[RMDB]
RNA sequence: GGGAACGACUCGAGUAGAGUCGAAAACGAAUGCAAUGUUCUUCACGCGUAGCGAAUGGGCAUCCUCGAAAACUUUUCGAGAAAAGUUUUUAACACCAGAAAUUCAGGCCAUAUUGGAUGAGCAGUUUGCAAACAAGACCGGGAUCGAAAGAUUGCAUGCGAUACUACUAUUCGUAGUAGUAUCGCAAAAAGAAACAACAACAACAAC
Reactivity to 2A3 in 0.01 (KOAc 150mM, MgCl2 10mM, bicine 150mM(pH8.5), 24C), signal-to-noise 2, nucleotides 027 to 156: c040g040a020a000u030g010c010a030a060u020g030u090u100c010u080u060c050a050c100g100c070g040u040a060g010c020g040a070a050u110g000g060g000c040a040u050c010c020u040c040g030a060a080a180a250c060u020u080u050u060c110g020a090g150a110a040a000a000g010u040u020u040u090u100a080a030c040a020c030c000a030g080a060a110a030u160u130c040a020g090g000c010c050a040u050a120u120u140g070g000a040u050g020a030g020c000a020g040u040u040u040g010c010a070a000a000c030a050a050g020a040c040c030g050g000g000a040u050c020g010a040a010a050g030a050u030u060g030c040a030
Reactivity to DMS in 0.01 (KOAc 150mM, MgCl2 10mM, bicine 150mM(pH8.5), 24C), signal-to-noise 2, nucleotides 027 to 156: c070g000a070a000u000g010c050a100a020u000g030u000u000c000u000u000c040a140c070g010c170g060u000a120g030c020g000a070a020u010g020g020g020c030a120u000c030c020u010c070g000a020a030a050a040c060u000u000u020u000c070g040a210g000a020a050a040a050g020u000u000u000u000u000a020a230c080a100c040c050a190g010a110a050a080u000u000c050a030g010g010c030c010a100u010a100u010u000g010g000a070u010g020a110g030c000a080g000u000u010u010g020c050a010a120a100c070a040a110g020a080c040c030g020g010g010a060u000c060g010a090a100a140g000a130u000u020g010c030a180